[RMDB]
The record gives the reactivity of an RNA of 207 nucleotides to DMS. DMS adducts were read by reverse transcription with MarathonRT. The RNA was probed in 150 mM KOAc, 10 mM MgCl2 and 150 mM bicine (pH 8.5) at 24 C.
RNA sequence: GGGAACGACUCGAGUAGAGUCGAAAACAAUGAGUAAUGAAGACCAUUAAGUCUAUCCAGAGAGCAGCUAGGCCAAGAAAAUGCGAUUGGUGAUUGAUUGGUGAUGUCUGCUGAGGACGAAGCUGUGUAGAGUGGUCUAGGGUCCUACUAUGUAGCAUAUUACGUCAGGAUUCGUCCUGACGUAAUAAAAAGAAACAACAACAACAAC
Reactivity to DMS in 0.01 (KOAc 150mM, MgCl2 10mM, bicine 150mM(pH8.5), 24C), signal-to-noise 4, nucleotides 027 to 156: c050a120a120u000g000a080g010u010a100a110u010g010a100a070g010a050c030c010a070u000u020a070a100g020u010c020u010a100u000c050c030a140g030a220g000a070g020c020a020g020c060u000a300g010g000c020c020a020a060g010a080a050a070a070u000g010c030g010a300u010u000g020g020u000g020a090u000u000g010a230u000u000g000g000u060g020a100u000g030u020c000u000g000c060u020g010a180g000g000a060c040g010a090a080g000c010u010g010u010g000u000a070g000a110g060u010g010g000u010c020u000a070g010g000g020u000c020c010u000a090c040u000a080u010g000u000a060g010c050a260